Description
The record gives the reactivity of an RNA of 177 nucleotides to 2A3 and DMS. The data come from the RNA Mapping Database (RMDB), library OK1LIB. For 2A3, 512 sequencing reads were counted. For DMS the reverse transcriptase was MarathonRT. High 2A3 reactivity points to a flexible backbone, as in loops and unpaired stretches. 2A3 adducts were read by reverse transcription with SuperScript II with manganese.
RNA sequence: GGGAACGACUCGAGUAGAGUCGAAAAAAGCACAUCGACGGUCAGGGUCGGGUGCUGGGCGGGGCCAUACUCGGUGACCGGGAGUACAUCGACGGUCCGGUGCAAAAGCUGAUGCGCCACACCGGUCAGGUCUCUACCACUUCGGUGGUAGAGACCUAAAAGAAACAACAACAACAAC
Reactivity to 2A3 in 0.01 (KOAc 150mM, MgCl2 10mM, bicine 150mM(pH8.5), 24C), signal-to-noise 1, nucleotides 027 to 126: a040a000g010c000a020c000a140u070c020g040a030c060g060g060u090c050a060g000g000g270u130c090g020g000g000u170g120c090u060g000g000g050c250g000g000g000g000c020c000a070u160a070c050u110c060g000g010u060g000a040c000c000g000g000g000a080g000u000a110c000a040u060c030g010a020c150g000g000u060c040c040g000g000u150g000c040a000a000a180a000g040c010u120g130a080u150g010c000g040c010c030a010c000a030c040c000g000g010u010c000
Reactivity to DMS in 0.01 (KOAc 150mM, MgCl2 10mM, bicine 150mM(pH8.5), 24C), signal-to-noise 1, nucleotides 027 to 126: a050a000g000c090a010c050a070u000c000g000a000c030g000g000u060c050a050g000g000g000u000c120g040g000g000u000g020c110u000g040g000g060c070g040g000g000g000c300c060a180u010a010c000u000c080g010g000u040g000a000c000c050g000g070g000a030g080u000a040c140a140u000c100g000a080c200g000g010u050c030c100g000g020u000g000c130a110a230a070a020g010c010u040g000a050u130g000c030g000c060c050a130c090a030c220c000g040g040u020c120